[RMDB]
Notes
Chemical mapping of a 177-nucleotide RNA with DMS and 2A3. For 2A3, 17,647 sequencing reads were counted. The data come from the RNA Mapping Database (RMDB), library TTRDES. DMS (dimethyl sulfate) methylates the pairing face of unpaired adenines and cytosines.

RNA sequence: GGGAACGACUCGAGUAGAGUCGAAAAGAUAUGGAUUGUUCAGGGAGCUCGUAUGUCGGAAACGACAUACUGGGAGCGCGAAACCUGACAAUCCUAAGUCAAAGACUCAAACUUCGGUUUGAGUCAACUCUAAGACAAGGUUCGCCUUGUCUUAGAGAAAAGAAACAACAACAACAAC
Reactivity to DMS in 0.01 (KOAc 150mM, MgCl2 10mM, bicine 150mM(pH8.5), 24C), signal-to-noise 4, nucleotides 027 to 126: g000a010u000a010u010g000g000a020u000u000g000u020u010c010a010g000g000g010a010g020c000u000c010g020u000a000u000g010u000c000g020g010a000a010a010c000g020a010c000a010u000a000c010u030g060g040g010a010g020c000g060c280g000a090a100a130c000c000u000g000a020c010a000a010u000c000c000u000a000a060g000u000c000a110a130a160g000a010c000u000c000a000a010a010c000u000u020c260g040g000u000u000u000g000a020g010u000c000a020a070
Reactivity to 2A3 in 0.01 (KOAc 150mM, MgCl2 10mM, bicine 150mM(pH8.5), 24C), signal-to-noise 4, nucleotides 027 to 126: g010a000u020a000u070g010g000a000u020u010g090u280u140c010a000g020g000g040a070g020c000u000c010g020u000a000u010g010u000c000g000g000a020a000a000c000g000a000c010a010u000a000c000u060g100g230g020a000g000c000g010c030g300a160a030a000c000c000u000g000a000c010a000a000u010c000c000u000a000a000g010u000c010a020a030a060g010a010c000u010c000a000a010a010c020u070u150c300g160g000u020u010u000g000a000g000u000c010a000a030